[RMDB]
RNA sequence: GGGAACGACUCGAGUAGAGUCGAAAACAUCGACCACGAACACUACCAAUCGAUCCGCCGGCGGUUCCAAACCCAAUUCGCGCAGCGUGCUCAGCGGUUCGAGAUCCGACAAGAUGGUCGAUUGGAAAGCCAUCACCUGGUUCGCCAGGUGAUGGCUAAAAGAAACAACAACAACAAC
Reactivity to 2A3 in 0.01 (KOAc 150mM, MgCl2 10mM, bicine 150mM(pH8.5), 24C), signal-to-noise 1, nucleotides 027 to 126: c000a130u080c000g080a090c000c030a000c020g070a190a000c010a060c050u050a020c030c030a000a100u000c000g000a000u190c000c100g050c000c070g130g060c010g000g120u000u000c120c000a060a060a110c000c000c000a000a080u180u210c000g000c000g090c070a170g000c070g070u100g020c050u050c120a000g060c030g060g000u000u000c090g000a090g000a060u030c000c000g030a030c060a000a090g050a270u190g000g000u060c000g000a050u000u000g000g000a120a050